[RMDB]
RNA sequence: GGGAACGACUCGAGUAGAGUCGAAAAUUGUCUUGGCAAAUGAAAAAUCUAGCCGUUUUCCAUCUAUAUCAUUGAUACCCUCCAUGGCCUCAAACAUCAAGUGGUACUGAAGAGGACUGUUAAAAGGCGAGUCUUACUUGUUCGCAAGUAAGACUCGAAAAGAAACAACAACAACAAC
Reactivity to 2A3 in 0.01 (KOAc 150mM, MgCl2 10mM, bicine 150mM(pH8.5), 24C), signal-to-noise 1, nucleotides 027 to 126: u140u040g010u040c050u060u040g020g000c020a020a190a300u150g080a210a070a080a060a080u050c070u040a020g000c010c040g020u060u010u000u010c030c020a000u000c130u160a120u040a030u230c060a040u000u040g050a040u110a160c000c000c000u010c070c000a030u020g070g000c020c000u030c030a150a080a070c020a110u010c010a120a120g030u000g000g030u130a300c000u010g010a000a000g000a010g010g050a000c020u030g030u110u100a040a070a030a030g070g010
Reactivity to DMS in 0.01 (KOAc 150mM, MgCl2 10mM, bicine 150mM(pH8.5), 24C), signal-to-noise 2, nucleotides 027 to 126: u000u010g020u010c040u010u000g030g030c080a030a030a050u000g010a010a130a030a040a080u000c040u000a130g020c010c040g020u010u000u010u000c010c010a040u010c080u000a140u010a070u000c060a060u000u000g000a100u000a110c040c040c020u000c040c060a130u010g010g000c020c030u010c110a070a060a070c130a050u020c170a060a080g020u000g000g000u010a070c090u000g020a060a110g020a060g010g000a090c030u010g020u010u000a040a030a090a090g020g010
An RNA of 177 nucleotides, treated with 2A3 and DMS and read out base by base. Values are in units of 0.01, from 0 to 300, in steps of 10. For DMS, 966 sequencing reads were counted. The RNA was probed in 150 mM KOAc, 10 mM MgCl2 and 150 mM bicine (pH 8.5) at 24 C. Source: RMDB library OK2TRN, as collected in RNAgym. For 2A3, 666 sequencing reads were counted. 2A3 adducts were read by reverse transcription with SuperScript II with manganese. For DMS the reverse transcriptase was MarathonRT.